[RMDB]
RNA sequence: GGGAACGACUCGAGUAGAGUCGAAAACGCUGUGGCCUACUCUUAUACAGAAUGGAAUCCUAGUGUACAGUGGUAUAAGUAAGCUGUGCAUUCGCUAUGUUUAGGUUUAGAAUGUAGUUUAGUGCUACAGGUAGACUGAGUUCGCUCAGUCUACCUGAAAAGAAACAACAACAACAAC
Reactivity to DMS in 0.01 (KOAc 150mM, MgCl2 10mM, bicine 150mM(pH8.5), 24C), signal-to-noise 2, nucleotides 027 to 126: c100g020c050u000g000u000g010g000c030c010u000a120c040u000c010u010u010a080u010a030c010a040g010a080a090u010g030g000a110a120u040c040c020u000a060g010u000g000u020a000c010a000g010u000g010g020u000a080u010a030a050g000u000a060a100g010c000u000g000u000g030c000a010u010u020c130g000c080u030a030u030g000u010u000u000a050g010g010u010u000u010a100g000a060a060u010g010u000a050g010u000u010u010a080g020u060g020c040u000a070
Reactivity to 2A3 in 0.01 (KOAc 150mM, MgCl2 10mM, bicine 150mM(pH8.5), 24C), signal-to-noise 3, nucleotides 027 to 126: c020g010c030u040g050u050g030g000c000c000u000a020c020u010c000u030u040a040u000a080c060a030g090a180a190u120g030g080a020a040u050c020c020u000a020g000u000g030u010a000c000a000g000u020g030g090u180a100u080a300a090g110u070a080a010g000c000u010g000u020g000c030a010u010u010c050g000c080u020a020u180g120u040u090u100a070g010g030u030u090u010a080g070a100a040u090g000u000a030g000u040u120u040a160g020u150g060c000u010a010
The record gives the reactivity of an RNA of 177 nucleotides to DMS and 2A3. Conditions: 150 mM KOAc, 10 mM MgCl2 and 150 mM bicine (pH 8.5), 24 C. Source: RMDB libraries RFM100 and RFMREP, as collected in RNAgym.